An RNA of 207 nucleotides, treated with 2A3 and read out base by base. For 2A3, 1,005 sequencing reads were counted. Reactivities are given for positions 27 through 156. Conditions: 150 mM KOAc, 10 mM MgCl2 and 150 mM bicine (pH 8.5), 24 C. The data come from the RNA Mapping Database (RMDB), library PDB130.

RNA sequence: GGGAACGACUCGAGUAGAGUCGAAAAUAGGAUAGCUGGUUUUCUGCGAAACCUAUAAUAGUAGGCAAUUUAAGUAACAUCUUAGUAGGUACAGAACUUAAUCUCAGACAAGAUGUAGAUUUUCAUACCUAUGUUUAGGUAUGAAAUGCAUUUUUUUGAACUUAUCUAUCUUCGGAUAGAUAAGUUCAAAAGAAACAACAACAACAAC
Reactivity to 2A3 in 0.01 (KOAc 150mM, MgCl2 10mM, bicine 150mM(pH8.5), 24C), signal-to-noise 2, nucleotides 027 to 156: u100a010g000g030a020u010a060g030c040u050g080g000u140u120u090u080c050u030g060c060g080a080a020a060c010c010u020a010u060a130a080u090a020g060u010a020g000g030c010a050a050u090u000u050a110a070g010u030a060a020c010a060u020c000u020u040a050g000u000a040g150g000u090a050c050a090g030a020a000c010u090u040a130a040u060c060u000c040a070g030a130c060a110a000g000a030u010g010u010a020g030a150u000u060u000u050c000a000u010a010c000c000u040a010u210g190u150u290u150a040g000g000u010a010u000g000a020a000a000u020g000c030a050u050u080u000u000u000u000u000